[RMDB]
RNA sequence: GGGAACGACUCGAGUAGAGUCGAAAAGAUAGGGGGUUCGCCCCCUAUCAAAGCUGCAAUGUACUUUCUGCACCAAAGACGGAAAAACCGUCAAAGUACAAAAAACGAUGGCGUUCGCGCCAUCGAAUCCAUUAAUUUUCUUCGGAAAAUUAAUGGAAAAAGAAACAACAACAACAAC
Reactivity to 2A3 in 0.01 (KOAc 150mM, MgCl2 10mM, bicine 150mM(pH8.5), 24C), signal-to-noise 2, nucleotides 027 to 126: g000a000u000a010g000g010g000g000g000u000u000c020g150c000c000c040c000c010u000a000u000c010a000a030a000g000c020u080g060c050a040a150u050g000u010a010c010u040u060u120c100u090g010c020a040c030c040a130a090a030g000a000c010g000g000a170a170a040a130a170c000c020g010u020c010a000a010a000g000u010a000c000a010a240a000a000a000a010c010g000a000u000g010g010c020g010u070u060c300g000c000g000c020c000a000u000c000g000a000a010
Reactivity to DMS in 0.01 (KOAc 150mM, MgCl2 10mM, bicine 150mM(pH8.5), 24C), signal-to-noise 2, nucleotides 027 to 126: g010a030u000a000g000g070g010g010g020u000u020c300g020c010c000c000c020c010u030a000u000c010a040a120a080g010c170u000g040c140a100a110u000g000u020a000c000u000u000u010c080u010g000c050a190c090c020a080a040a160g020a030c000g000g000a080a140a070a180a160c000c010g010u000c000a020a000a010g010u000a010c030a000a100a100a050a090a060c030g000a000u000g000g030c000g000u000u000c230g010c000g000c000c000a000u000c000g000a060a060
The record gives the reactivity of an RNA of 177 nucleotides to 2A3 and DMS.
The RNA was probed in 150 mM KOAc, 10 mM MgCl2 and 150 mM bicine (pH 8.5) at 24 C.
Values cover nucleotides 27 to 126.